Record summary: Structure probing data (2A3) for a 177-nucleotide construct. For 2A3, 783 sequencing reads were counted. It was measured as part of the RMDB library OK1LIB. Conditions: 150 mM KOAc, 10 mM MgCl2 and 150 mM bicine (pH 8.5), 24 C.
RNA sequence: GGGAACGACUCGAGUAGAGUCGAAAAGCGGCACGUUUCCGUCGGAGCGCAAAGACUUGGAAACCCUCUGCGGCGUAGGCAGAAGCACCGCCGCCGCCAUUUCUGCCUUCUCCUUCAACCGCCGCGAGGUGCGGCCACGAUUCGUCGUGGCCGCACCAAAAGAAACAACAACAACAAC
Reactivity to 2A3 in 0.01 (KOAc 150mM, MgCl2 10mM, bicine 150mM(pH8.5), 24C), signal-to-noise 2, nucleotides 027 to 126: g000c010g030g120c000a030c080g000u010u040u040c070c000g060u050c050g110g020a120g030c110g000c070a080a200a010g020a030c050u090u150g020g020a080a000a000c000c030c020u090c130u140g000c000g000g030c050g010u020a050g010g000c000a010g030a090a010g050c050a010c050c040g020c000c010g000c000c000g030c040c000a030u060u040u000c070u060g000c010c000u110u040c100u100c040c000u050u160c030a130a130c010c000g000c010c000g010c000g000a040